This 177-nucleotide RNA was probed chemically with 2A3 and DMS. For DMS, 2,217 sequencing reads were counted.
RNA sequence: GGGAACGACUCGAGUAGAGUCGAAAACGAACGUGUUCGUCGCGCCGAUGGCGGUCGGCGAUCUGGGCACGAUGGCGGUGCUGGCCGAUGUCGGCGGCGUCGGGGUCGGCGUGUGGCAGGCCGGGGAUGGUCAAAAUCAGUUCGCUGAUUUUGACCAAAAAGAAACAACAACAACAAC
Reactivity to 2A3 in 0.01 (KOAc 150mM, MgCl2 10mM, bicine 150mM(pH8.5), 24C), signal-to-noise 1, nucleotides 027 to 126: c030g020a120a030c070g060u080g080u150u050c050g000u030c090g010c000g000c050c010g040a010u020g040g060c080g000g010u000c000g030g040c020g020a010u070c020u050g040g040g040c070a000c130g080a070u070g120g020c030g010g100u070g010c030u040g060g000c030c000g050a070u040g080u120c000g020g110c030g010g000c050g030u000c020g010g020g010g040u010c010g030g000c010g060u090g010u030g070g070c040a030g040g000c020c000g010g030g000g020a030
Reactivity to DMS in 0.01 (KOAc 150mM, MgCl2 10mM, bicine 150mM(pH8.5), 24C), signal-to-noise 1, nucleotides 027 to 126: c070g010a100a100c080g010u010g020u000u000c000g030u000c110g000c040g010c010c000g000a040u000g010g000c050g000g010u000c010g000g010c040g000a040u000c020u010g000g000g000c040a070c070g000a120u000g040g000c050g020g010u000g010c020u000g000g000c000c080g000a070u000g000u000c020g010g010c010g000g010c020g020u000c040g010g010g000g010u000c010g000g020c020g020u000g020u000g010g030c060a100g000g000c040c060g000g010g000g020a170

Source: RMDB library OK2TRN, as collected in RNAgym.